Overview: Structure probing data (2A3 and DMS) for a 177-nucleotide construct. Values cover nucleotides 27 to 126. For DMS, 12,747 sequencing reads were counted. The RNA was probed in 150 mM KOAc, 10 mM MgCl2 and 150 mM bicine (pH 8.5) at 24 C. DMS adducts were read by reverse transcription with MarathonRT. 2A3 adducts were read by reverse transcription with SuperScript II with manganese.
RNA sequence: GGGAACGACUCGAGUAGAGUCGAAAAAAGACGCAGAUGCCGUCCAUGAAUGAAGCCGUUAAACAGAUUGAGCAGGAAGUGCUUACCACCUGGCCCACGGAGGCAAUUUCUCAUGCUGAAAACGUGGGACAGUGUUACAGUUCGCUGUAACACUGUCAAAAGAAACAACAACAACAAC
Reactivity to 2A3 in 0.01 (KOAc 150mM, MgCl2 10mM, bicine 150mM(pH8.5), 24C), signal-to-noise 6, nucleotides 027 to 126: a010a000g060a010c030g000c030a030g060a260u090g100c090c010g050u000c010c010a080u120g060a110a030u070g040a080a030g010c020c010g040u060u120a100a130a030c030a030g080a130u120u150g030a020g030c040a010g060g090a150a030g100u040g040c020u040u040a100c010c010a020c010c020u030g030g020c000c010c000a000c000g030g000a040g030g000c000a010a020u030u070u000c030u010c010a040u050g000c010u030g040a080a080a030a040c020g000u030g000g020
Reactivity to DMS in 0.01 (KOAc 150mM, MgCl2 10mM, bicine 150mM(pH8.5), 24C), signal-to-noise 9, nucleotides 027 to 126: a060a050g010a070c090g020c050a140g010a100u010g010c080c030g020u000c020c050a090u000g010a100a060u000g010a080a090g020c050c040g000u010u010a060a070a100c100a040g010a090u000u010g000a080g020c080a040g000g010a070a070g010u000g010c030u010u000a100c090c070a080c070c030u010g010g000c020c010c030a020c020g000g010a130g010g000c020a030a040u000u000u000c020u000c030a160u000g000c030u000g000a110a060a060a140c040g020u000g010g010